The record gives the reactivity of an RNA of 207 nucleotides to 2A3. For 2A3, 1,101 sequencing reads were counted. Values cover nucleotides 27 to 156. The reactions ran in a buffer of 150 mM KOAc, 10 mM MgCl2 and 150 mM bicine (pH 8.5), at 24 C. For 2A3 the reverse transcriptase was SuperScript II with manganese.

RNA sequence: GGGAACGACUCGAGUAGAGUCGAAAAGUGAUCUUCGGAUCACAUAACUCCUAAGUCGGAAGCAUCGAUCGACCAUGAGAGCGACGAUCUAUCGGAAACGAUAGGGAGCUCUAUGGUCGGGAGCUUCCGAUAUGGACCGCGCGUGCUUCGGCACGAACACUCUGGGCCUUUUCGAAGGCCCAGAGUGAAAAGAAACAACAACAACAAC
Reactivity to 2A3 in 0.01 (KOAc 150mM, MgCl2 10mM, bicine 150mM(pH8.5), 24C), signal-to-noise 1, nucleotides 027 to 156: g000u010g000a000u010c010u050u130c200g180g020a000u000c010a000c000a000u070a030a090c000u040c000c010u020a040a090g030u000c000g010g010a000a010g010c030a300u120c050g180a150u090c000g000a000c000c020a010u150g230a010g000a000g100c000g200a300c010g010a010u000c000u000a000u010c010g050g030a070a100a080c010g010a000u020a000g000g000g000a000g000c000u000c000u000a010u010g010g000u000c000g000g000g000a000g000c000u000u020c000c010g000a000u000a000u010g010g050a020c060c080g110c040g020c010g120u000g010c010u090u070c240g110g000c000a000c000g120a030a120